[RMDB]
RNA sequence: GGGAACGACUCGAGUAGAGUCGAAAAGAGCAGUUUGCCGAUGGAUUCACGAAUAGAAGGAUGCCAGCUCACGGCACGACUCACCGCGUCGUUGAGCGUCAGGCUACCGGGAGCGGCAGCGCUCAGCUUCGCGAAAGAUAUUCGUAUCUUUCGCGAAAAAAGAAACAACAACAACAAC
Reactivity to 2A3 in 0.01 (KOAc 150mM, MgCl2 10mM, bicine 150mM(pH8.5), 24C), signal-to-noise 7, nucleotides 027 to 126: g020a010g010c090a030g010u190u220u040g020c020c010g020a050u130g080g050a100u170u080c080a060c170g140a140a090u150a210g080a110a020g040g010a010u050g030c010c010a010g000c000u010c010a010c000g000g000c020a010c030g080a090c030u130c130a090c090c020g000c000g010u010c000g010u040u120g010a000g000c010g090u130c080a040g010g000c010u020a060c010c000g020g030g020a050g030c000g000g000c000a000g010c000g000c000u010c000a020g040c040
Reactivity to DMS in 0.01 (KOAc 150mM, MgCl2 10mM, bicine 150mM(pH8.5), 24C), signal-to-noise 5, nucleotides 027 to 126: g000a030g020c000a070g010u010u020u030g030c010c010g010a100u010g030g000a150u000u030c070a150c170g000a100a090u030a090g020a220a140g010g010a220u000g000c010c020a250g000c010u000c000a010c000g000g010c000a030c010g000a140c190u000c170a100c180c030g000c060g000u000c020g000u020u030g030a010g020c010g000u020c180a090g000g000c010u010a200c010c010g010g000g000a120g020c020g020g000c020a030g000c030g000c010u000c010a120g010c140